[RMDB]
The record gives the reactivity of an RNA of 177 nucleotides to 2A3 and DMS. The data come from the RNA Mapping Database (RMDB), library M2PK50. High DMS reactivity at an A or C suggests that its Watson-Crick edge is free. The RNA was probed in 150 mM KOAc, 10 mM MgCl2 and 150 mM bicine (pH 8.5) at 24 C.

RNA sequence: GGGAACGACUCGAGUAGAGUCGAAAAUCACUGGACUUCGGUCCAGUGAAAAAGAAAGACGGACGGGGAACGUCAAACGCUGACGUACGAAAGUACGAAAAAAAAGUACGCCCUUCGGGGCGUACAACCAAAUAGUUCUGUUCGCAGAACUAUUUGGAAAAGAAACAACAACAACAAC
Reactivity to 2A3 in 0.01 (KOAc 150mM, MgCl2 10mM, bicine 150mM(pH8.5), 24C), signal-to-noise 3, nucleotides 027 to 126: u030c000a000c000u000g010g010a000c010u020u050c250g090g000u010c000c000a000g000u000g000a000a000a010a000a000g020a020a030a010g030a010c010g030g010a010c060g040g020g000g030a070a040c010g000u010c020a100a070a020c070g000c110u120g080a060c020g010u020a010c000g050a120a020a010g010u010a000c010g120a150a010a010a000a000a000a000a010g000u000a000c000g000c000c000c000u010u030c130g030g000g010g020c000g000u000a000c010a010a000
Reactivity to DMS in 0.01 (KOAc 150mM, MgCl2 10mM, bicine 150mM(pH8.5), 24C), signal-to-noise 3, nucleotides 027 to 126: u000c000a010c000u000g010g000a020c000u000u000c250g020g020u000c000c000a010g010u030g000a010a040a050a090a070g010a060a170a090g010a040c020g000g010a070c100g010g000g040g010a130a120c020g000u010c030a030a100a110c190g040c110u000g000a180c020g010u000a010c010g010a140a090a140g000u000a000c020g010a010a000a000a040a050a030a070a120g010u000a000c010g000c000c000c020u000u000c130g020g010g000g020c000g000u000a010c000a030a060